[RMDB]
RNA sequence: GGGAACGACUCGAGUAGAGUCGAAAAGACCAAUAACAGAAUGCACCACAGCGUAAAAUCAUCUGAUUGGGUGAGUUGGUCGCACCGCCAUUUGACGAACGAACGCCAAGCCUAAGCCGUCUUAGUGAACACGAGCUAGUCUUCGGACUAGCUCGAAGAUCUUGUAUAGGUUCGCCUAUACAAGAUCAAAAGAAACAACAACAACAAC
Reactivity to DMS in 0.01 (KOAc 150mM, MgCl2 10mM, bicine 150mM(pH8.5), 24C), signal-to-noise 3, nucleotides 027 to 156: g000a130c000c020a050a100u040a080a290c060a270g000a110a100u000g010c000a090c020c020a060c060a140g000c070g010u000a030a070a080a070u010c020a060u000c020u000g020a160u000u020g010g020g010u000g010a130g020u000u000g020g010u000c010g000c020a070c040c020g000c010c020a130u010u000u010g010a050c030g010a110a100c070g000a060a090c030g000c010c010a050a140g000c050c020u010a080a090g030c010c040g010u000c010u000u000a020g020u000g020a060a100c090a190c000g000a000g030c010u000a030g000u000c000u000u020c300g020g020a020c010u010a000g030c010u000c000g000a010a090
Reactivity to 2A3 in 0.01 (KOAc 150mM, MgCl2 10mM, bicine 150mM(pH8.5), 24C), signal-to-noise 6, nucleotides 027 to 156: g010a010c000c000a020a040u130a040a020c030a040g150a190a090u130g030c020a030c030c010a030c040a050g030c030g080u110a050a090a090a060u080c040a020u020c050u060g080a250u110u200g060g000g000u020g010a050g020u010u040g010g010u010c010g000c030a030c000c020g000c010c010a070u080u070u120g070a040c030g020a140a000c030g010a020a010c020g040c030c030a040a040g010c010c010u050a050a020g030c020c000g030u050c020u060u060a080g020u040g130a070a010c050a010c130g000a000g000c000u000a000g000u000c000u020u020c150g010g000a000c000u000a000g000c000u000c000g010a010a000